[RMDB]
The record gives the reactivity of an RNA of 177 nucleotides to 2A3 and DMS. The 2A3 profile rests on 1,137 reads. For DMS the reverse transcriptase was MarathonRT. The RNA was probed in 150 mM KOAc, 10 mM MgCl2 and 150 mM bicine (pH 8.5) at 24 C. Values cover nucleotides 27 to 126.
RNA sequence: GGGAACGACUCGAGUAGAGUCGAAAAGUAGUACAGAUCCUCGUACUCAUCGCGCGGAACCUCCCGCGGACCCGACUUCACGGAGCGGCGAGAGGUCAUGGUUCCACGAACACGCUAGGGUCGGAUGCGAACCCAAAGCAUUCGUGCUUUGGGUUCGAAAAGAAACAACAACAACAAC
Reactivity to 2A3 in 0.01 (KOAc 150mM, MgCl2 10mM, bicine 150mM(pH8.5), 24C), signal-to-noise 1, nucleotides 027 to 126: g020u110a000g010u040a060c000a070g050a110u140c020c050u030c080g020u000a010c020u000c040a110u080c030g060c000g030c090g040g000a050a040c010c010u060c060c000c000g030c000g030g020a040c020c030c000g080a180c070u260u140c080a050c240g100g000a120g070c020g070g000c000g020a030g000a000g000g010u030c010a090u130g010g020u040u040c000c030a040c020g030a050a010c080a000c070g040c010u060a010g040g040g000u020c030g040g030a060u110g030
Reactivity to DMS in 0.01 (KOAc 150mM, MgCl2 10mM, bicine 150mM(pH8.5), 24C), signal-to-noise 2, nucleotides 027 to 126: g010u020a060g010u000a070c040a080g010a140u020c030c090u010c150g010u000a050c060u020c050a200u000c070g000c070g010c030g030g010a100a060c080c030u000c080c000c000g000c030g020g000a130c130c020c020g010a190c120u000u000c070a130c170g000g000a000g000c070g000g000c030g000a170g010a070g010g020u000c060a050u000g000g020u010u000c010c030a050c070g000a060a080c060a150c090g000c080u010a130g000g000g040u000c050g010g000a080u020g000